This 207-nucleotide RNA was probed chemically with 2A3 and DMS. Reactivities are rounded to 0.1 and cut off at 0 and 3. The reactions ran in a buffer of 150 mM KOAc, 10 mM MgCl2 and 150 mM bicine (pH 8.5), at 24 C. It was measured as part of the RMDB library OK3TST.
RNA sequence: GGGAACGACUCGAGUAGAGUCGAAAAGAUAAGACCAGAACUUGGUCCAAGAGCCAGCCACCCAGGGAGACUCCUGCUUUCCACAGAGGAGACCAGGUUCCUGUCGUGCUGGUUGUUCGUGUCAGGCAGUCCUGCAAACUUUGAGUCUGCGCAGCGAAUAGUAAUGGAGUUUCGACUCCAUUACUAUAAAAGAAACAACAACAACAAC
Reactivity to 2A3 in 0.01 (KOAc 150mM, MgCl2 10mM, bicine 150mM(pH8.5), 24C), signal-to-noise 3, nucleotides 027 to 156: g070a030u120a120a080g010a030c020c010a030g060a140a160c100u070u060g010g000u010c010c010a090a020g050a010g130c010c010a000g050c010c020a020c000c000c020a000g020g030g000a080g060a060c080u020c030c000u040g090c020u060u070u040c040c010a090c090a160g160a050g090g000a000g010a010c020c050a020g020g000u050u060c010c000u040g040u140c050g030u110g000c010u010g000g000u010u040g000u000u010c030g000u000g100u100c050a030g020g050c000a000g050u040c020c020u110g060c080a170a140a160c110u200u160u140g060a070g030u020c010u030g000c050g000c070a000g040c010g040a050
Reactivity to DMS in 0.01 (KOAc 150mM, MgCl2 10mM, bicine 150mM(pH8.5), 24C), signal-to-noise 2, nucleotides 027 to 156: g010a230u010a090a100g000a030c010c000a060g010a150a070c100u010u010g030g000u000c020c030a080a150g030a140g010c000c000a050g010c020c020a140c000c040c010a300g000g000g010a100g000a050c050u000c010c000u020g020c060u000u010u000c020c020a120c090a230g010a300g000g010a050g010a030c030c010a000g010g000u010u000c000c000u000g020u010c020g010u010g010c020u000g010g030u000u000g000u000u000c080g030u010g000u020c010a070g030g010c000a100g000u000c010c010u000g010c070a050a080a040c040u000u010u010g000a200g020u000c010u000g010c040g040c050a210g050c060g010a110

For 2A3, 1,497 sequencing reads were counted.